[RMDB]
RNA sequence: GGGAACGACUCGAGUAGAGUCGAAAAAGCAUGUUAGGUUCGGAUGGUGCACUAUUGUGUUAUUAGUAACUAAGUAAGCUUACAAUCGAAAAUGUUUAACCAUAAAAGGGUAAAAUGGUGUAAGACAGAUACCCUCUGAGCUUCGGCUCAGAGGGAAGACAACAUAUUAGUUCGCUAAUAUGUUGUCAAAAGAAACAACAACAACAAC
Reactivity to 2A3 in 0.01 (KOAc 150mM, MgCl2 10mM, bicine 150mM(pH8.5), 24C), signal-to-noise 6, nucleotides 027 to 156: a000g050c050a040u070g020u070u050a040g030g040u040u060c060g020g030a080u070g010g020u040g020c030a010c040u080a070u110u140g030u000g020u050u020a050u020u030a050g090u030a060a020c030u010a100a060g110u010a100a030g070c020u040u070a020c040a050a120u080c080g090a040a060a040a040u020g020u030u070u040a020a020c000c010a020u110a110a200a030a010g060g010g000u060a070a070a030a020u060g020g010u020g020u050a030a020g030a020c020a020g070a020u100a090c000c000c000u000c000u010g010a000g000c010u030u150c270g070g000c000u000c000a000g000a000g010g000g000a000a000
Reactivity to DMS in 0.01 (KOAc 150mM, MgCl2 10mM, bicine 150mM(pH8.5), 24C), signal-to-noise 3, nucleotides 027 to 156: a090g020c020a070u010g010u010u000a060g020g020u010u000c020g010g030a080u000g010g040u000g010c020a070c060u000a070u010u000g030u000g010u000u000a080u010u000a080g010u010a050a090c010u000a040a100g020u000a080a120g010c030u000u000a050c060a070a110u010c050g000a050a080a060a080u000g010u000u000u000a050a050c010c010a050u000a060a080a140a150g000g010g020u000a010a050a050a030u000g020g010u000g010u000a040a060g000a100c040a060g010a190u000a080c000c010c000u010c000u010g000a020g000c010u000u010c300g030g030c000u000c000a000g020a030g020g000g010a000a010
Chemical mapping of a 207-nucleotide RNA with 2A3 and DMS.
Values cover nucleotides 27 to 156.
The reactions ran in a buffer of 150 mM KOAc, 10 mM MgCl2 and 150 mM bicine (pH 8.5), at 24 C.
DMS adducts were read by reverse transcription with MarathonRT.
The 2A3 profile rests on 6,536 reads.